[RMDB]
RNA sequence: GGGAACGACUCGAGUAGAGUCGAAAAGGGGUCAUCGUAGAACGCGAUGAGGACGCUUGGAUUUAUGGUUCUGAAGCCUCCACGGAACCAUUGUCAGCGUCCCAUCGCAAUACGAUGACGGAGGCACCCAAAAUCCGGCAGGUUCGCCUGCCGGAAACGAUGUUUAGUGAUUCGUCACUAAACAUCGAAAAGAAACAACAACAACAAC
Reactivity to DMS in 0.01 (KOAc 150mM, MgCl2 10mM, bicine 150mM(pH8.5), 24C), signal-to-noise 1, nucleotides 027 to 156: g000g000g010g000u000c000a000u010c000g000u000a050g000a080a160c200g030c000g030a020u020g000a080g070g000a040c000g030c020u010u010g020g030a050u000u000u000a020u010g050g040u000u010c020u000g040a040a130g040c040c010u000c020c040a300c030g010g000a030a010c000c000a030u020u000g010u010c030a120g000c000g010u000c000c020c000a010u000c000g020c010a030a020u010a010c000g000a030u000g000a030c000g030g010a040g100g010c000a200c000c000c000a020a070a080a140u000c000c010g010g060c010a000g030g010u000u010c300g010c040c000u000g000c030c010g000g000a010a000a060
Reactivity to 2A3 in 0.01 (KOAc 150mM, MgCl2 10mM, bicine 150mM(pH8.5), 24C), signal-to-noise 4, nucleotides 027 to 156: g080g010g040g030u000c000a000u000c000g000u010a030g070a300a100c200g000c010g020a010u040g060a250g060g000a000c020g010c090u190u290g170g000a020u120u210u150a000u080g010g000u000u000c000u010g030a090a030g010c000c000u030c010c010a010c010g000g010a000a000c010c010a000u000u030g010u010c090a030g000c000g000u010c000c000c000a000u000c000g000c000a000a000u000a000c000g000a000u000g000a000c000g000g000a000g000g000c000a060c020c010c000a030a080a010a110u000c000c010g000g000c010a010g020g030u060u250c250g070c060c000u000g010c000c000g000g000a000a000a010